The data come from the RNA Mapping Database (RMDB), library TTRDES. Chemical mapping of a 177-nucleotide RNA with DMS and 2A3. In probing experiments dimethyl sulfate is read out at A N1 and C N3, which are open when not base-paired. The 2A3 profile rests on 5,658 reads.
RNA sequence: GGGAACGACUCGAGUAGAGUCGAAAAAAAAGAUAUGGAGACACUACCCACCUUCGCAAAUACGAGGAUCGUAAGUCGGAAACGACUUACGGGAGUAUUUGACGAAGAGGUGUCUCCUAAGUCAAAAGAUACACUGUAGGUUCGCCUACAGUGUAUCAAAAGAAACAACAACAACAAC
Reactivity to DMS in 0.01 (KOAc 150mM, MgCl2 10mM, bicine 150mM(pH8.5), 24C), signal-to-noise 3, nucleotides 027 to 126: a090a020a110a080g020a090u010a130u000g000g000a030g030a030c010a010c000u000a120c020c020c040a300c090c000u000u000c000g010c010a000a010a020u000a000c000g010a120g020g000a030u000c010g000u000a000a010g010u010c010g000g000a050a070a180c010g020a010c010u000u010a000c010g000g010g010a020g020u010a010u000u000u000g000a180c000g010a020a010g000a030g040g000u010g010u000c010u000c000c000u010a000a070g000u010c070a080a080a130a100
Reactivity to 2A3 in 0.01 (KOAc 150mM, MgCl2 10mM, bicine 150mM(pH8.5), 24C), signal-to-noise 2, nucleotides 027 to 126: a000a050a000a030g110a050u170a070u160g010g010a010g000a000c010a020c010u170a200c000c040c050a030c000c020u010u000c000g000c010a020a000a000u000a000c010g040a300g170g000a040u010c000g010u010a010a000g000u020c020g000g030a050a050a050c010g020a000c000u010u000a000c000g000g000g010a030g000u010a020u000u020u050g220a300c000g000a000a000g000a000g000g000u000g000u020c000u020c010c000u000a010a000g100u040c070a040a060a030a140